[RMDB]
An RNA of 207 nucleotides, treated with 2A3 and read out base by base.
RNA sequence: GGGAACGACUCGAGUAGAGUCGAAAACUAUCUAGUUUUCUAGAUAGAGCAUGCUUUUGCAUGCGAACCUGCGCGUGACACAUCCAGCUUUUUUUGCUCGCAGGGGCUCAUCCGAGAAAGGACUUUUGUCCGAUCGGAUGUGUCAAGGAUGGUCAGAACCUCGAGGAUAGUUCGCUAUCCUCGAGGUAAAAGAAACAACAACAACAAC
Reactivity to 2A3 in 0.01 (KOAc 150mM, MgCl2 10mM, bicine 150mM(pH8.5), 24C), signal-to-noise 2, nucleotides 027 to 156: c000u000a000u000c000u000a000g110u180u060u300u300c000u000a010g010a010u000a020g040a010g000c000a010u020g000c020u080u190u280u300g010c010a000u010g020c000g020a050a060c000c000u010g010c020g000c020g070u100g030a020c040a000c000a140u000c010c020a020g000c010u060u170u060u080u010u220u300g010c020u020c020g020c020a000g010g000g000g000c000u010c010a010u000c000c020g000a000g010a050a080a060g010g010a010c040u150u210u220u300g000u000c010c000g000a000u020c010g000g000a000u000g010u000g000u000c000a010a000g000g010a000u000g000g000u020c000a020g030a100
The reactions ran in a buffer of 150 mM KOAc, 10 mM MgCl2 and 150 mM bicine (pH 8.5), at 24 C. It was measured as part of the RMDB library OK3TST.